Annotation: An RNA of 207 nucleotides, treated with DMS and 2A3 and read out base by base. The RNA was probed in 150 mM KOAc, 10 mM MgCl2 and 150 mM bicine (pH 8.5) at 24 C. Reactivities are given for positions 27 through 156. For 2A3 the reverse transcriptase was SuperScript II with manganese. For 2A3, 4,881 sequencing reads were counted. For DMS, 3,776 sequencing reads were counted.

RNA sequence: GGGAACGACUCGAGUAGAGUCGAAAAAUCCGCAUUCGUGCGGAUAAAAAAACCUUUGUGGAAACAUAAGAGGAUCGGAAUUUCUCCCAUUGGGAGAGGAGAUGAUCUACCCACCUUGGGUUUCCACUCUGGUAAAAAAGCUAUCUUCGGAUAGCAAACAUACAUAACCUUUCGAGGUUAUGUAUGUAAAAGAAACAACAACAACAAC
Reactivity to DMS in 0.01 (KOAc 150mM, MgCl2 10mM, bicine 150mM(pH8.5), 24C), signal-to-noise 2, nucleotides 027 to 156: a050u000c000c010g030c010a110u010u000c270g030u000g030c010g030g040a030u000a000a000a090a110a040a090a080c000c020u000u000u000g000u010g000g010a080a030a030c000a040u020a060a050g000a210g000g010a020u000c010g000g000a240a160u000u010u000c000u000c000c000c010a300u000u000g050g040g010a030g010a030g030g010a130g000a300u000g000a020u000c010u010a090c020c020c050a300c060c000u000u000g020g000g020u000u010u000c000c020a010c000u000c070u000g000g010u000a010a050a080a090a080a060g010c010u000a010u000c010u010u010c300g070g030a050u000a010g020c000a020a030
Reactivity to 2A3 in 0.01 (KOAc 150mM, MgCl2 10mM, bicine 150mM(pH8.5), 24C), signal-to-noise 4, nucleotides 027 to 156: a000u000c010c000g010c000a020u040u090c200g100u040g000c010g020g010a000u040a030a030a010a010a010a010a020c010c000u020u000u010g000u000g000g000a020a000a000c010a020u040a030a010g000a030g010g020a010u020c020g050g020a060a040u010u040u010c000u010c000c010c130a300u230u300g010g010g000a010g000a010g030g020a120g010a030u120g010a000u000c010u050a070c050c040c030a080c010c020u010u020g110g000g000u000u010u000c000c000a000c010u000c000u000g000g000u060a110a050a040a030a030a000g010c000u010a000u000c000u020u060c240g120g010a000u000a010g000c000a000a100